An RNA of 177 nucleotides, treated with 2A3 and DMS and read out base by base.
RNA sequence: GGGAACGACUCGAGUAGAGUCGAAAAUUAAAGCGAAUCAAGUACAACCACUUAACAAAUAUCCAGUUGUUUUUGUACAUGGAUUUUUAGGAUUAGUAGGCGAUAAUGCACCUGCUUUAUAUCCAAAGGUGCACAACAUAUUCGUAUGUUGUGCACCAAAAGAAACAACAACAACAAC
Reactivity to 2A3 in 0.01 (KOAc 150mM, MgCl2 10mM, bicine 150mM(pH8.5), 24C), signal-to-noise 1, nucleotides 027 to 126: u090u070a010a000a000g030c000g060a000a030u080c200a140a000g070u120a080c000a180a070c000c070a080c060u150u220a020a020c070a000a010a230u300a060u220c080c000a090g080u050u000g000u020u010u050u020u020g000u000a030c050a110u000g090g030a020u000u000u000u050u300a020g000g000a050u010u020a030g000u000a000g010g000c000g120a010u080a260a000u300g130c010a000c000c020u000g050c000u070u000u040a170u000a010u000c000c000a010a020a020
Reactivity to DMS in 0.01 (KOAc 150mM, MgCl2 10mM, bicine 150mM(pH8.5), 24C), signal-to-noise 1, nucleotides 027 to 126: u000u000a010a070a050g080c050g000a050a120u000c010a140a280g000u070a010c030a120a010c070c030a030c000u030u000a050a060c050a000a200a130u000a110u000c080c000a080g000u000u010g000u030u050u000u050u030g010u000a070c150a020u060g030g000a030u000u000u000u000u000a110g000g000a040u080u030a000g030u030a020g020g180c120g090a110u010a100a090u060g010c040a100c000c030u040g020c000u020u020u000a020u000a040u020c000c000a040a080a040

Conditions: 150 mM KOAc, 10 mM MgCl2 and 150 mM bicine (pH 8.5), 24 C. For DMS, 1,121 sequencing reads were counted.